[RMDB]
RNA sequence: GGGAACGACUCGAGUAGAGUCGAAAACAUGAUUUCUCGGCAACUAUAAUGACGGGGAGGUCGGGUUCGAACCGUCGUAUGGUUCGAGGGCUGAGAGGGCUUUAGGGAUUAAAGCUCGGCGAACUGACUGGGACUGAACUUUCGAGUUCAGUUCCAGAAAAGAAACAACAACAACAAC
Reactivity to DMS in 0.01 (KOAc 150mM, MgCl2 10mM, bicine 150mM(pH8.5), 24C), signal-to-noise 5, nucleotides 027 to 126: c050a070u050g010a090u020u010u020c000u010c030g000g010c060a080a040c070u010a040u000a040a050u010g000a030c010g000g000g000g010a260g010g010u020c050g020g010g000u020u020c010g000a280a130c000c000g030u010c080g010u000a030u010g020g000u000u000c050g010a100g000g010g010c040u010g000a060g000a110g000g000g000c020u010u000u000a010g010g060g010a190u030u000a010a020a030g000c020u010c000g020g000c090g000a070a140c080u010g010a170
Reactivity to 2A3 in 0.01 (KOAc 150mM, MgCl2 10mM, bicine 150mM(pH8.5), 24C), signal-to-noise 8, nucleotides 027 to 126: c040a080u150g060a160u100u100u010c010u000c000g020g000c040a030a010c040u040a030u060a190a240u130g010a000c010g000g020g010g000a030g010g070u150c120g110g080g000u110u080c000g000a010a000c000c000g050u050c010g020u040a030u080g000g010u030u040c060g050a030g040g040g000c030u050g010a020g020a040g060g010g010c000u050u040u070a050g080g120g150a160u140u130a050a010a000g010c010u000c020g050g030c060g030a070a070c050u070g070a030